[RMDB]
RNA sequence: GGGAACGACUCGAGUAGAGUCGAAAACAGAGGAAAGGCAUGGUCAAUGACAAUCCGAAAGAGAAAUUCAGAGUAAGGGACUUUAAAGAUGUGAACCACUUUAUUAGACUACUGCUGGGCAUGUGUAUAUGUGUACAUGCAUACAUACACAUAUACAACGUCUAAGCUUCUUCGGAAGCUUAGACGUAAAAGAAACAACAACAACAAC
Reactivity to 2A3 in 0.01 (KOAc 150mM, MgCl2 10mM, bicine 150mM(pH8.5), 24C), signal-to-noise 1, nucleotides 027 to 156: c040a000g050a020g060g010a100a080a000g000g040c000a000u090g100g000u080c060a090a130u090g000a040c030a030a000u000c040c090g090a090a190a000g070a000g040a010a040a000u080u000c050a000g000a010g000u050a000a030g000g010g050a090c020u060u000u130a000a030a000g050a070u050g030u130g250a050a030c080c000a060c020u090u050u000a030u040u070a090g030a020c110u110a020c080u080g070c000u030g040g000g040c130a070u080g000u000g000u040a000u000a000u030g000u000g000u020a010c040a030u190g160c090a080u100a000c000a000u010a000c000a020c000a010u000a000u000a030c000a000